Source information
Chemical mapping of a 177-nucleotide RNA with DMS and 2A3. Values cover nucleotides 27 to 126. 2A3 adducts were read by reverse transcription with SuperScript II with manganese. It was measured as part of the RMDB library OK2TRN.
RNA sequence: GGGAACGACUCGAGUAGAGUCGAAAAUUUAUUUGUUGAUGACAUGGAGUCGUUGGGGCAAAGCCUCGAUAAAGCACAGUUAAGUUAUCGUCAGGCAAUGAACAAACUGUCGCAAGGCCGUGGUAACGAUUUUGAAGAAAUUCGUUUCUUCAAAAUCAAAAGAAACAACAACAACAAC
Reactivity to DMS in 0.01 (KOAc 150mM, MgCl2 10mM, bicine 150mM(pH8.5), 24C), signal-to-noise 5, nucleotides 027 to 126: u000u010u000a060u010u000u000g020u000u010g010a080u000g020a140c050a070u000g010g010a100g010u000c030g030u010u000g020g000g010g010c040a080a100a250g010c010c010u000c030g010a040u010a040a090a100g000c070a050c090a050g010u000u000a070a130g000u000u010a030u000c050g010u000c140a090g020g020c100a050a100u010g000a030a060c130a080a080a060c080u000g010u000c130g000c040a070a080g010g000c040c020g030u000g010g010u000a080a090c140
Reactivity to 2A3 in 0.01 (KOAc 150mM, MgCl2 10mM, bicine 150mM(pH8.5), 24C), signal-to-noise 3, nucleotides 027 to 126: u040u050u040a150u050u050u070g060u040u070g050a080u080g040a020c010a030u070g100g000a080g030u050c040g020u040u060g010g020g000g050c030a100a070a050g000c000c000u010c030g000a030u050a060a060a000g050c020a020c020a100g030u090u060a190a020g000u040u040a050u060c020g060u050c070a010g040g000c040a050a080u110g030a040a010c050a050a050a020c020u030g000u050c040g000c110a050a030g060g000c010c020g040u040g020g030u080a070a010c070